The record gives the reactivity of an RNA of 207 nucleotides to 2A3. The RNA was probed in 150 mM KOAc, 10 mM MgCl2 and 150 mM bicine (pH 8.5) at 24 C. Source: RMDB library OK3TST, as collected in RNAgym. Values cover nucleotides 27 to 156.

RNA sequence: GGGAACGACUCGAGUAGAGUCGAAAAAAGGAAGACAACGAGCAGGUCUUCAUGGCCGACGAGUACGUCUACGGCGUGCGCUCCCGCUGCAAUGUCGGCUUCGGCUUCUGGCAACUGGCGGCGAUGUCCACCGAAGAACUGAACCAGGUCAACUUCGGGGAAACAUUAUCUUCGGAUAAUGUUUCCCAAAAGAAACAACAACAACAAC
Reactivity to 2A3 in 0.01 (KOAc 150mM, MgCl2 10mM, bicine 150mM(pH8.5), 24C), signal-to-noise 1, nucleotides 027 to 156: a000a000g110g010a010a040g010a020c040a110a080c080g040a010g100c080a000g040g010u000c000u000u020c010a150u120g040g000c020c000g000a060c090g000a020g020u030a020c010g010u010c030u060a030c070g000g000c010g000u030g000c040g000c020u070c010c000c000g000c030u030g020c040a050a090u130g000u000c000g030g040c000u000u100c030g140g000c030u110u090c110u300g010g010c010a050a050c080u030g010g030c020g030g000c070g040a020u100g040u020c000c010a020c000c090g020a040a000g010a030a060c020u040g030a010a050c000c000a090g020g030u050c030a060a060c070u060u020c000g000